An RNA of 177 nucleotides, treated with 2A3 and DMS and read out base by base. DMS adducts were read by reverse transcription with MarathonRT. For 2A3, 6,379 sequencing reads were counted. For DMS, 5,734 sequencing reads were counted. Reactivities are given for positions 27 through 126. The reactions ran in a buffer of 150 mM KOAc, 10 mM MgCl2 and 150 mM bicine (pH 8.5), at 24 C.

RNA sequence: GGGAACGACUCGAGUAGAGUCGAAAAGUGCAGAUUGCGCGCGUACAGGCGAUUGGUGAUGAGCCUAACGAUCUCUUAGAUAAACGCGAUCAGAUGAUCCGUGAGCUAGCGGUGCUUGUACCAGUUAGAUCCAUUUCUUGUUCGCAAGAAAUGGAUCAAAAGAAACAACAACAACAAC
Reactivity to 2A3 in 0.01 (KOAc 150mM, MgCl2 10mM, bicine 150mM(pH8.5), 24C), signal-to-noise 5, nucleotides 027 to 126: g030u030g000c010a020g060a300u140u180g040c030g000c000g000c020g020u020a030c010a030g010g030c030g080a080u050u120g060g010u100g040a080u080g030a020g000c010c000u010a050a010c030g050a050u020c020u000c000u110u110a080g010a140u140a110a190a020c060g020c120g030a010u010c010a020g200a300u300g000a010u020c010c040g020u030g000a010g020c030u050a020g020c020g000g040u050g000c010u020u030g000u000a020c010c000a010g030u070u070a060
Reactivity to DMS in 0.01 (KOAc 150mM, MgCl2 10mM, bicine 150mM(pH8.5), 24C), signal-to-noise 5, nucleotides 027 to 126: g010u010g020c030a110g010a110u010u000g020c040g020c040g010c150g020u000a030c100a030g010g000c030g010a090u000u000g000g030u000g010a130u000g000a240g000c000c010u010a090a120c130g000a050u000c010u000c050u000u000a060g010a090u010a040a150a070c070g020c140g000a030u000c010a160g010a140u010g010a030u000c020c040g010u000g010a120g010c050u000a050g000c090g020g020u000g010c020u010u010g010u000a060c010c080a140g000u000u000a110